[RMDB]
RNA sequence: GGGAACGACUCGAGUAGAGUCGAAAAGUAUAGUUGGAGUGCUAGAGAGUUACAUAGGAUCUAUAAACAACAUAACAAAACAAUCAGCAUGUGUUGCUAUGAGUAAACUUCUUAUUGAGAUCAAUAGUGAUGGACCAAAAUUCGUUUUGGUCCAUCAAAAAGAAACAACAACAACAAC
Reactivity to DMS in 0.01 (KOAc 150mM, MgCl2 10mM, bicine 150mM(pH8.5), 24C), signal-to-noise 3, nucleotides 027 to 126: g020u000a050u000a090g010u000u000g010g010a130g030u000g030c050u000a050g000a140g000a060g010u000u010a080c090a040u000a110g000g000a040u000c020u010a070u010a090a140a060c090a060a080c050a030u010a040a060c050a030a080a020a050c070a070a070u010c130a090g010c140a100u010g020u000g000u000u000g000c020u000a020u000g010a100g000u000a040a060a040c120u010u000c030u000u000a070u000u010g000a110g000a090u000c030a050a050u000a070g010
The record gives the reactivity of an RNA of 177 nucleotides to DMS. It was measured as part of the RMDB library OK2TRN. Conditions: 150 mM KOAc, 10 mM MgCl2 and 150 mM bicine (pH 8.5), 24 C.